[RMDB]
RNA sequence: GGGAACGACUCGAGUAGAGUCGAAAAACUAAUCCAAAGCAAGUAUAGGAGAACAGGUUUUUAACUAUUUUUAGGCAGAUAAAAAAUAGUAUUUGACAGUCUAACACUAUCUGAACAAUAAGUGUUAAAAAGUCGUCUCUGUUCGCAGAGACGACAACACCCUAAACUGGUUCGCCAGUUUAGGGUGAAAAGAAACAACAACAACAAC
Reactivity to 2A3 in 0.01 (KOAc 150mM, MgCl2 10mM, bicine 150mM(pH8.5), 24C), signal-to-noise 2, nucleotides 027 to 156: a010c050u060a090a020u010c010c010a040a020a000g010c020a020a040g010u030a040u080a130g020g020a050g010a110a030c080a170g090g000u030u010u010u000u030a040a010c000u000a000u010u010u000u000u010a050g070g000c050a030g050a200u170a070a060a010a010a000a000u000a010g010u010a030u010u020u030g010a020c000a000g020u020c020u020a010a000c000a000c010u020a040u030c010u010g030a030a000c020a020a050u060a060a020g000u000g010u020u020a040a120a030a020a000g000u000c000g000u000c000u000c000u010g060u030u030c080g000c010a000g000a000g000a000c010g000a000c000a000a010